RNA sequence: GGGAACGACUCGAGUAGAGUCGAAAAGAAACUCGUUUCGCGUAGGCUGCCUAAUUCAAGGAAUUAGCGUGCCUUCAUGCUAAGGGUUUGAUAUCUGCUAAAACCCGGUGCAUUCAUCAAUGCAGGUCUCAUCCAAAUGCCUUCGGGCAUUUGGAAAUAAGGACUUAUGAUUCGUCAUAAGUCCUUAAAAAGAAACAACAACAACAAC
Reactivity to 2A3 in 0.01 (KOAc 150mM, MgCl2 10mM, bicine 150mM(pH8.5), 24C), signal-to-noise 3, nucleotides 027 to 156: g060a000a070a000c040u030c050g050u040u090u090c050g000c030g030u010a000g020g000c020u050g050c000c020u010a020a010u030u000c150a240a110g180g030a120a000u000u000a010g000c030g060u020g000c010c000u010u050c040a030u050g010c010u020a020a020g010g010g000u020u000u000g000a010u010a030u020c010u030g030c010u030a030a030a010a030c010c000c000g030g000u040g000c030a050u070u280c020a050u100c110a130a150u200g000c010a000g040g030u010c020u050c050a070u000c000c000a000a020a000u000g000c010c020u040u090c190g060g000g000c000a000u000u000u000g000g000a000a000a000
Reactivity to DMS in 0.01 (KOAc 150mM, MgCl2 10mM, bicine 150mM(pH8.5), 24C), signal-to-noise 3, nucleotides 027 to 156: g010a120a080a060c020u010c050g010u010u000u000c050g000c050g020u000a000g020g040c000u000g020c120c000u000a010a020u000u000c040a170a190g040g010a040a030u000u000a000g030c040g030u000g000c010c010u000u000c060a080u000g030c020u000a300a160g020g010g020u000u000u000g010a180u010a030u000c070u000g000c060u000a140a040a030a080c000c000c010g000g080u000g000c010a050u010u000c040a090u010c100a080a150u000g000c010a090g020g000u000c070u000c030a200u000c000c000a010a020a020u000g020c000c000u000u010c300g030g020g000c000a010u000u000u010g010g000a010a010a040
Source: RMDB library M2RFPK, as collected in RNAgym. This 207-nucleotide RNA was probed chemically with 2A3 and DMS. The reactions ran in a buffer of 150 mM KOAc, 10 mM MgCl2 and 150 mM bicine (pH 8.5), at 24 C. For DMS the reverse transcriptase was MarathonRT. For 2A3 the reverse transcriptase was SuperScript II with manganese. For DMS, 7,087 sequencing reads were counted. For 2A3, 2,387 sequencing reads were counted.